About this RNA
Chemical mapping of a 177-nucleotide RNA with DMS. For DMS, 884 sequencing reads were counted. For DMS the reverse transcriptase was MarathonRT. Conditions: 150 mM KOAc, 10 mM MgCl2 and 150 mM bicine (pH 8.5), 24 C.
[RMDB]
RNA sequence: GGGAACGACUCGAGUAGAGUCGAAAAGAGGAGCAGGAGCCGGCGACUAUGAGCCGGACGAGGAGGUCGGCCUCGAGCUGCCGCCGCCCAUGAAACCCAUCCAAGAGCCGCACCUGAUUGCCAACGGACCUACAAUGCUGUUCGCAGCAUUGUAGGUAAAAGAAACAACAACAACAAC
Reactivity to DMS in 0.01 (KOAc 150mM, MgCl2 10mM, bicine 150mM(pH8.5), 24C), signal-to-noise 1, nucleotides 027 to 126: g000a160g020g000a160g020c070a080g000g010a210g020c030c040g020g040c020g020a100c170u010a080u000g020a190g010c030c040g000g000a070c050g030a080g040g070a150g000g020u000c010g010g000c060c000u020c060g000a100g010c010u030g000c010c040g000c040c000g000c050c000c070a040u010g000a070a070a150c030c020c000a120u000c030c090a080a050g010a180g010c000c040g000c120a020c020c050u000g000a070u010u010g000c070c080a040a120c190g010g010